RNA sequence: GGGAACGACUCGAGUAGAGUCGAAAACGGUCUCCAUGUUUCAUUCUCUUUACUAAUGGCUUGAUGUGAUUCUUCAUUAUUGAAUCUGGAACAUCAAAGAACCAUAUUGAUUUAGGAGAACCCAUUCUAUGAUGAAUCUUUGAAUUAUCCUGAAUUGAUCCUGAUCAGCAUUCGUGCUGAUCAGGAUAAAAGAAACAACAACAACAAC
Reactivity to 2A3 in 0.01 (KOAc 150mM, MgCl2 10mM, bicine 150mM(pH8.5), 24C), signal-to-noise 1, nucleotides 027 to 156: c140g080g040u070c080u060c110c020a060u090g050u010u110u080c010a040u130u040c070u050c000u050u150u130a100c110u120a110a030u000g010g010c020u070u020g020a020u030g050u070g040a030u000u020c000u050u040c070a230u060u300a110u110u190g000a000a000u040c020u000g090g100a070a070c000a020u000c000a090a050a150g030a140a020c000c000a020u030a110u080u120g030a060u130u070u060a000g000g020a020g000a040a040c050c020c000a010u020u000c050u070a060u160g060a040u050g060a130a140u000c050u040u080u150g040a010a050u060u090a050u150c000c060u070g090a170a110u050u240g050